[RMDB]
RNA sequence: GGGAACGACUCGAGUAGAGUCGAAAAUGAGUUGUAUCCACCGGGUAGUUUCCAACUGCGGCUGGUGUGAAGAAGGAGCCGUUCCACGCAGGACGCGAUCAAGAAGAAGCCGAAGCAACUUCAGGGCCUACGACAAAGAGUUCGCUCUUUGUCGUAGAAAAGAAACAACAACAACAAC
Reactivity to DMS in 0.01 (KOAc 150mM, MgCl2 10mM, bicine 150mM(pH8.5), 24C), signal-to-noise 1, nucleotides 027 to 126: u030g000a070g000u010u000g030u000a060u000c040c020a080c090c000g000g000g020u000a080g030u000u000u000c060c050a070a100c170u000g000c010g000g000c050u010g000g000u000g000u020g040a050a040g020a080a100g000g000a000g040c020c010g010u030u000c020c000a100c110g000c060a040g000g000a080c050g000c070g040a040u000c090a030a010g000a080a040g000a090a140g020c030c050g000a050a060g000c030a070a080c100u000u000c020a050g010g000g010c140

Structure probing data (DMS) for a 177-nucleotide construct. The RNA was probed in 150 mM KOAc, 10 mM MgCl2 and 150 mM bicine (pH 8.5) at 24 C. For DMS the reverse transcriptase was MarathonRT. It was measured as part of the RMDB library VIROID.